[RMDB]
RNA sequence: GGGAACGACUCGAGUAGAGUCGAAAAGAUAUGGAUUCACUACGACAACAGCUAACGGUUUCGGAAACGAAAUUUAGACAUGUCGGAGUGAAUCCUAAGUCAAAAUCGGAGGGUUCGCCCUCCGAAACUACUCAGCUAGGUUCGCCUAGCUGAGUAGAAAAGAAACAACAACAACAAC
Reactivity to 2A3 in 0.01 (KOAc 150mM, MgCl2 10mM, bicine 150mM(pH8.5), 24C), signal-to-noise 3, nucleotides 027 to 126: g010a010u060a030u090g000g000a020u010u000c020a000c000u040a020c020g000a000c020a300a020c040a300g030c020u020a100a030c190g100g000u030u000u010c020g000g040a050a020a040c000g000a000a030a030u110u040u040a050g030a040c140a210u300g010u020c000g020g010a020g000u040g000a000a010u020c000c010u000a000a000g000u000c030a010a000a000a300u050c000g020g010a000g000g040g040u130u160c300g230c040c000c000u000c000c000g000a000a000a000
Reactivity to DMS in 0.01 (KOAc 150mM, MgCl2 10mM, bicine 150mM(pH8.5), 24C), signal-to-noise 3, nucleotides 027 to 126: g000a070u000a300u020g000g000a000u000u000c000a020c000u000a020c000g030a010c000a050a120c250a220g010c010u000a020a090c300g000g000u000u010u000c010g000g000a070a060a170c020g010a010a020a000u010u000u010a020g020a040c070a190u000g000u000c000g020g010a030g010u010g000a000a020u000c000c000u010a000a080g000u010c020a040a050a150a090u000c000g010g010a000g000g000g040u010u010c300g000c000c000c000u000c000c010g000a010a040a070